[RMDB]
RNA sequence: GGGAACGACUCGAGUAGAGUCGAAAAGAUAUGGAUCCUACACAGCUUUUGACGCUUCUGUAUCGGAAACGAUACAAGAAGCGAUAAGCUGGUAGGAUCCUAAGUCAAAGUCUGCGUUCGCGCAGACGUCUUUUAGGCCCUUCGGGGCCUAAAAGACAAAAGAAACAACAACAACAAC
Reactivity to 2A3 in 0.01 (KOAc 150mM, MgCl2 10mM, bicine 150mM(pH8.5), 24C), signal-to-noise 1, nucleotides 027 to 126: g030a010u070a030u110g010g020a000u000c020c000u000a000c300a000c010a020g000c030u170u180u300u300g300a200c070g000c040u000u040c020u000g010u020a000u020c000g030g000a010a050a070c000g000a000u000a000c010a050a110g010a000a010g000c000g000a000u000a010a030g000c000u010g000g000u010a000g010g000a000u000c000c000u010a010a010g000u010c030a040a130a060g000u040c000u010g000c030g040u060u080c300g000c000g000c130a000g000a000c010
Reactivity to DMS in 0.01 (KOAc 150mM, MgCl2 10mM, bicine 150mM(pH8.5), 24C), signal-to-noise 1, nucleotides 027 to 126: g020a070u000a300u000g010g000a020u000c000c010u000a010c000a140c010a020g030c000u000u000u000u010g020a300c080g010c000u000u020c000u010g000u000a000u000c000g000g000a150a100a300c000g030a020u000a010c000a060a030g000a000a010g010c000g000a030u000a010a020g040c000u000g000g000u000a010g000g000a000u000c000c000u000a000a040g000u010c060a080a120a240g010u000c000u010g020c010g000u000u010c290g020c010g000c000a010g000a000c000
Structure probing data (2A3 and DMS) for a 177-nucleotide construct. 2A3 adducts were read by reverse transcription with SuperScript II with manganese. For 2A3, 1,751 sequencing reads were counted. For DMS the reverse transcriptase was MarathonRT. The reactions ran in a buffer of 150 mM KOAc, 10 mM MgCl2 and 150 mM bicine (pH 8.5), at 24 C.